[RMDB]
RNA sequence: GGGAACGACUCGAGUAGAGUCGAAAAUACUGUGUGAUGAGGAGACUGAGACAAAGAGUAGAUAGCCAGUUUGUUGACUGGCAAGGCCUCGUUAGGCAAGGGAUAGAAUCUAAAAUUUACUGCAAUCCUGGUACUAUUGCUUCGGCAAUAGUACCAGAAAAGAAACAACAACAACAAC
Reactivity to 2A3 in 0.01 (KOAc 150mM, MgCl2 10mM, bicine 150mM(pH8.5), 24C), signal-to-noise 1, nucleotides 027 to 126: u070a020c030u000g020u000g030u090g000a090u030g000a000g050g050a010g000a050c030u050g070a020g020a110c050a060a170a040g050a060g050u050a030g000a170u090a060g000c000c000a030g020u000u030u090g160u170u300g050a020c000u000g000g130c010a000a000g020g000c000c010u050c050g100u070u070a050g000g060c070a100a010g060g000g000a040u040a290g060a100a010u020c020u200a040a020a120a240u110u100u120a060c050u000g080c020a000a070u090c000
Reactivity to DMS in 0.01 (KOAc 150mM, MgCl2 10mM, bicine 150mM(pH8.5), 24C), signal-to-noise 2, nucleotides 027 to 126: u030a150c090u000g020u020g060u000g030a010u000g000a120g010g000a050g010a050c020u000g000a100g000a080c160a100a080a130g010a090g010u000a060g010a150u000a150g010c000c000a020g010u000u000u010g040u010u020g000a100c030u000g000g020c000a050a070g000g000c050c010u000c120g000u010u010a070g000g010c030a040a090g010g000g000a150u000a100g000a050a300u000c050u000a010a010a040a100u010u000u000a050c050u010g000c140a030a100u000c170